[RMDB]
RNA sequence: GGGAACGACUCGAGUAGAGUCGAAAAAUCAUACUGUAGUCUUAACCUUCAAUGAGUCAAUAUCGUUAGGCUCAUCUGACACCUGACGCACUCGUUCAGACUACAGUAUGUGUACGGUCCUUCAAUCAGGUGUCAGAUGAGCCUGAUAGAAGGACAACACUUGCAACAUCUUCGGAUGUUGCAAGUGAAAAGAAACAACAACAACAAC
Reactivity to 2A3 in 0.01 (KOAc 150mM, MgCl2 10mM, bicine 150mM(pH8.5), 24C), signal-to-noise 3, nucleotides 027 to 156: a010u010c000a000u000a010c000u000g000u000a000g000u010c000u040u050a050a030c030c060u230u270c300a210a230u210g040a050g040u040c020a090a080u070a090u230c050g020u040u080a000g000g000c000u000c000a010u000c000u000g000a000c000a000c000c000u030g100a090c120g010c170a050c130u170c140g060u040u020c020a000g000a000c000u000a010c000a000g030u010a000u010g010u000g010u020a070c100g060g040u020c000c010u000u130c080a090a070u020c000a010g020g000u020g020u000c000a000g020a000u000g000a000g000c000c000u020g000a000u000a000g000a010a010g070g000a000c020a090a000